An RNA of 207 nucleotides, treated with 2A3 and DMS and read out base by base. Reactivities are given for positions 27 through 156. The RNA was probed in 150 mM KOAc, 10 mM MgCl2 and 150 mM bicine (pH 8.5) at 24 C. For 2A3 the reverse transcriptase was SuperScript II with manganese. For 2A3, 1,217 sequencing reads were counted. As a SHAPE reagent, 2A3 marks flexible, mostly unpaired nucleotides at the ribose 2'-OH.
RNA sequence: GGGAACGACUCGAGUAGAGUCGAAAAUUGGGUUAGUGUGCUGCCUUUAGAAGAAUGAAGCCUCUGUAUGUUCUCCCAUGGAAACAUGCUCCAAUGUAUGUUGUUAAGUAAAACAAAAACAAAAACAAGAAAAACACAGGGUGAAGAAAAGCAUGCACGUAAUAAGAGACUUCGGUCUCUUAUUACGAAAAGAAACAACAACAACAAC
Reactivity to 2A3 in 0.01 (KOAc 150mM, MgCl2 10mM, bicine 150mM(pH8.5), 24C), signal-to-noise 2, nucleotides 027 to 156: u120u130g030g010g000u030u050a080g030u030g000u020g040c010u010g010c010c000u110u140u110a120g020a180a050g010a050a110u150g050a080a000g020c030c010u030c050u070g040u040a070u120g050u030u020c080u010c080c050c000a050u050g020g060a040a050a000c010a010u050g030c000u040c020c080a090a040u120g010u020a070u030g010u060u000g030u060u090a120a130g020u040a060a060a000a100c090a050a080a060a020a000c050a040a080a080a010a010c020a030a100g190a110a070a020a010a000c070a010c020a010g000g060g000u110g020a020a040g030a010a070a010a000g010c000a010u040g010c010a030
Reactivity to DMS in 0.01 (KOAc 150mM, MgCl2 10mM, bicine 150mM(pH8.5), 24C), signal-to-noise 2, nucleotides 027 to 156: u020u000g020g020g060u000u000a050g030u000g010u000g010c020u010g000c020c030u000u010u010a080g030a150a090g010a090a070u010g010a160a290g000c020c040u000c040u030g040u050a040u000g020u000u000c060u000c000c050c100a060u000g000g020a120a000a040c020a010u000g010c000u000c050c090a060a130u040g040u000a060u000g000u000u000g000u000u010a090a130g010u010a040a060a080a210c070a040a090a040a050a130c080a100a050a060a080a050c040a080a120g000a060a080a110a050a050c040a060c050a050g000g030g010u000g010a070a120g000a040a010a040a060g000c020a020u000g020c010a190